[RMDB]
RNA sequence: GGGAACGACUCGAGUAGAGUCGAAAACAAGGCCAUACCUUGCUGAAUCAGGCGGUGGUGCUUAAGGGAGUCAACGACGAUUCAGAGACGCUCGCAUCCCUGAGUCGCGCACUGUUCGAGCACGGCGCUUCAUGAAGACUUUCGAGUCUUCAUGAAGAAAAGAAACAACAACAACAAC
Reactivity to 2A3 in 0.01 (KOAc 150mM, MgCl2 10mM, bicine 150mM(pH8.5), 24C), signal-to-noise 6, nucleotides 027 to 126: c020a030a050g090g000c030c010a030u070a120c050c020u040u070g000c020u030g040a050a070u120c010a030g050g000c020g070g080u110g040g030u090g020c020u070u080a120a080g050g010g020a040g090u110c050a050a050c040g100a040c010g040a030u080u080c040a020g010a020g020a120c020g030c080u060c040g030c050a080u030c010c000c000u000g010a020g020u050c020g000c000g010c050a110c090u030g040u080u060c040g070a000g010c010a000c040g040g000c040g000
Reactivity to DMS in 0.01 (KOAc 150mM, MgCl2 10mM, bicine 150mM(pH8.5), 24C), signal-to-noise 7, nucleotides 027 to 126: c070a080a080g010g000c040c110a160u010a210c030c010u000u010g010c030u000g010a110a080u010c080a090g010g010c030g020g010u000g020g030u000g000c020u000u000a070a100g020g000g000a060g000u000c060a050a080c020g010a080c050g010a060u010u000c090a060g000a160g010a070c060g000c160u000c170g000c070a230u000c000c010c000u000g000a020g020u000c010g010c030g010c060a060c020u000g010u000u000c050g010a050g010c020a030c040g000g010c100g010